An RNA of 177 nucleotides, treated with 2A3 and DMS and read out base by base. Source: RMDB library OK2TRN, as collected in RNAgym. High 2A3 reactivity points to a flexible backbone, as in loops and unpaired stretches.
RNA sequence: GGGAACGACUCGAGUAGAGUCGAAAAGAUCGGCCACACUAACGGCGCCGGUGGCAUGACAGCCGACAUUCUGGGUGUCCCGCGGACCCUGGGCUGCCACCCAUGUGGCGGGCGGUACCGUGAUCCACACCGUCUUGCUUUUCGAAGCAAGACGGUGAAAAGAAACAACAACAACAAC
Reactivity to 2A3 in 0.01 (KOAc 150mM, MgCl2 10mM, bicine 150mM(pH8.5), 24C), signal-to-noise 1, nucleotides 027 to 126: g030a040u070c020g050g050c010c070a050c000a040c060u060a120a000c040g140g000c030g050c010c000g040g030u050g000g020c020a000u110g050a110c040a030g060c030c020g030a040c030a170u230u110c050u180g010g000g000u080g050u030c030c010c030g080c100g010g010a060c000c000c000u080g040g110g000c030u030g000c000c000a010c010c080c010a190u210g020u130g100g040c000g000g000g020c040g000g010u100a200c030c010g040u020g010a000u000c030c000a020
Reactivity to DMS in 0.01 (KOAc 150mM, MgCl2 10mM, bicine 150mM(pH8.5), 24C), signal-to-noise 1, nucleotides 027 to 126: g000a060u010c010g040g030c030c050a070c080a070c120u010a140a100c030g040g010c030g060c000c060g000g040u000g020g000c070a090u000g010a060c040a080g020c060c000g010a090c050a140u000u020c100u030g000g010g040u000g000u000c010c020c030g040c110g030g000a070c020c030c020u000g010g000g020c020u000g000c040c010a080c200c010c030a090u020g000u000g020g000c090g000g010g000c000g000g010u010a060c020c000g030u000g000a130u000c040c030a270